[RMDB]
Background: Structure probing data (2A3) for a 207-nucleotide construct. High 2A3 reactivity points to a flexible backbone, as in loops and unpaired stretches. For 2A3, 1,295 sequencing reads were counted.
RNA sequence: GGGAACGACUCGAGUAGAGUCGAAAAGUUUACGCUCCAAAAUCGGUGGAUAGCAGCCCUAUCAAUAUCUAGGAGAACUGUGCUAUGUUUAGAAGAUUAGGUAGUCUCUAAACAGAACAAUUUACCUCAUACGUUAGGACGUUCGCGUCCUAACGAAGUUUGCAUUAGCCUUCGGGCUAAUGCAAACAAAAGAAACAACAACAACAAC
Reactivity to 2A3 in 0.01 (KOAc 150mM, MgCl2 10mM, bicine 150mM(pH8.5), 24C), signal-to-noise 2, nucleotides 027 to 156: g010u010u030u110a090c050g010c020u040c010c000a070a050a030a110u140c080g060g010u040g050g000a020u040a040g000c050a040g010c040c000c000u040a030u130c030a080a060u040a050u250c080u060a050g020g040a070g040a090a120c030u110g030u050g030c000u020a020u080g010u000u000u010a090g020a300a000g000a040u020u060a020g060g000u040a020g020u020c000u000c010u020a000a000a000c010a020g030a080a000c090a060a000u060u090u030a010c000c020u080c060a090u060a140c020g010u000u000a000g000g000a010c000g000u030u040c230g010c010g050u000c000c000u000a000a000c000g000a020a010